[RMDB]
RNA sequence: GGGAACGACUCGAGUAGAGUCGAAAAGAUAUGGAAUUAACGGGAGCUACUGUCGGAAACGACAGAAUAGCUGUGAACGUUCAAUUCCUAAGUCAAAGCUCGUUGAUAGUUCGCUAUCAACGAGCAACUUGAAGUAAAUGUUCGCAUUUACUUCAAGAAAAGAAACAACAACAACAAC
Reactivity to DMS in 0.01 (KOAc 150mM, MgCl2 10mM, bicine 150mM(pH8.5), 24C), signal-to-noise 7, nucleotides 027 to 126: g000a010u000a010u010g000g000a010a010u000u000a010a010c000g010g000g000a000g020c010u000a100c000u000g010u000c000g020g010a010a000a020c000g010a020c000a010g000a070a150u010a010g020c000u000g010u020g010a270a230c010g000u000u000c300a010a010u000u000c000c000u010a000a140g000u000c010a090a160a180g010c010u000c000g010u000u000g000a010u000a000g010u000u010c300g020c010u000a000u000c000a000a000c000g000a000g000c010a000a020
Reactivity to 2A3 in 0.01 (KOAc 150mM, MgCl2 10mM, bicine 150mM(pH8.5), 24C), signal-to-noise 5, nucleotides 027 to 126: g000a000u020a010u040g000g010a000a000u010u000a010a000c000g010g010g010a030g000c010u020a010c000u030g000u000c000g000g000a010a010a000c000g010a000c020a000g010a040a140u130a010g000c000u080g300u010g300a010a000c000g000u010u080c090a020a010u010u000c000c000u000a000a000g010u000c010a060a130a110g000c000u000c010g000u010u000g000a000u000a000g040u090u080c300g000c160u000a000u010c000a000a000c000g000a000g000c000a000a000
Source: RMDB library TTRDES, as collected in RNAgym. Structure probing data (DMS and 2A3) for a 177-nucleotide construct. Reactivities are given for positions 27 through 126. For DMS, 17,398 sequencing reads were counted. For 2A3, 33,894 sequencing reads were counted. The RNA was probed in 150 mM KOAc, 10 mM MgCl2 and 150 mM bicine (pH 8.5) at 24 C.